Chemical mapping of a 207-nucleotide RNA with 2A3. The 2A3 profile rests on 718 reads. It was measured as part of the RMDB library M2RFPK. For 2A3 the reverse transcriptase was SuperScript II with manganese. The RNA was probed in 150 mM KOAc, 10 mM MgCl2 and 150 mM bicine (pH 8.5) at 24 C.

[RMDB]
RNA sequence: GGGAACGACUCGAGUAGAGUCGAAAAACUCCUAUUCCAACACGUCCUCGUCGUACAGUGUGGUAACAUGUGUCACCACAUAUCCAAGCUUGGGUACACGGGCUUGACCCAACCCCUUGGGCGGAUGAAAACCAGAUUACGUUCGCGUAAUCUGGAACGGAACUGAUGUGUUCGCACAUCAGUUCCGAAAAGAAACAACAACAACAAC
Reactivity to 2A3 in 0.01 (KOAc 150mM, MgCl2 10mM, bicine 150mM(pH8.5), 24C), signal-to-noise 1, nucleotides 027 to 156: a000c040u070c010c020u090a140u070u100c040c010a110a050c050a060c150g020u030c020c000u110c070g110u010c000g030u110a040c040a190g000u000g000u010g020g000u010a060a020c030a150u220g140u070g060u200c050a020c070c030a000c000a020u090a010u070c000c000a000a020g040c050u040u030g010g000g050u030a020c030a000c020g000g010g000c020u070u100g150a210c000c000c000a010a020c000c000c000c000u000u000g010g010g000c000g000g000a000u010g120a020a000a030a080c000c000a000g000a000u000u000a040c020g000u070u100c290g000c000g090u010a000a000u000c010u000g000g000a000a000